[RMDB]
RNA sequence: GGGAACGACUCGAGUAGAGUCGAAAAGACUCCAACAAUAGAAUGCUGGUUUCUGGGAACUGGGAAGAGGGAAAAUGCAGAGUUAUUGUUUAGUGGAUAAAGAGUUUCAGUUUCGCAAGAUGAAAAACAUUCUAGGGAAGGAUAUAUAUCAUUGUGAUGAGUGUUUUAGAUUCGUCUAAAACACUCAAAAAGAAACAACAACAACAAC
Reactivity to 2A3 in 0.01 (KOAc 150mM, MgCl2 10mM, bicine 150mM(pH8.5), 24C), signal-to-noise 5, nucleotides 027 to 156: g030a030c030u010c030c010a040a020c010a020a060u120a080g130a150a080u070g010c030u030g060g020u030u040u030c010u030g000g030g000a090a050c060u060g010g000g030a050a040g030a060g050g010g030a040a090a030a010u120g010c010a010g030a010g110u060u040a040u040u020g030u020u080u100a060g020u020g030g010a030u070a100a140a050g090a010g000u010u070u060c040a030g000u000u060u080c050g000c050a030a040g010a040u060g020a120a040a000a010a000c010a010u040u040c030u070a030g020g010g050a030a010g010g010a000u020a000u000a000u000a010u160c030a070u040u090g020u030g050a070
Reactivity to DMS in 0.01 (KOAc 150mM, MgCl2 10mM, bicine 150mM(pH8.5), 24C), signal-to-noise 3, nucleotides 027 to 156: g030a080c040u000c020c030a070a110c040a070a130u020a190g010a120a110u010g000c000u000g020g020u000u010u000c030u000g000g030g010a080a050c090u000g010g030g020a070a100g020a090g040g000g020a030a050a050a110u010g010c060a110g010a130g030u010u000a030u000u000g000u010u000u010a080g030u000g010g010a070u000a060a080a130g010a140g010u010u000u020c030a070g010u000u010u000c010g050c070a060a140g010a080u000g000a030a070a070a090a060c030a080u000u000c010u010a070g020g030g000a080a180g000g010a060u000a070u010a070u020a100u010c050a060u010u000g010u000g010a190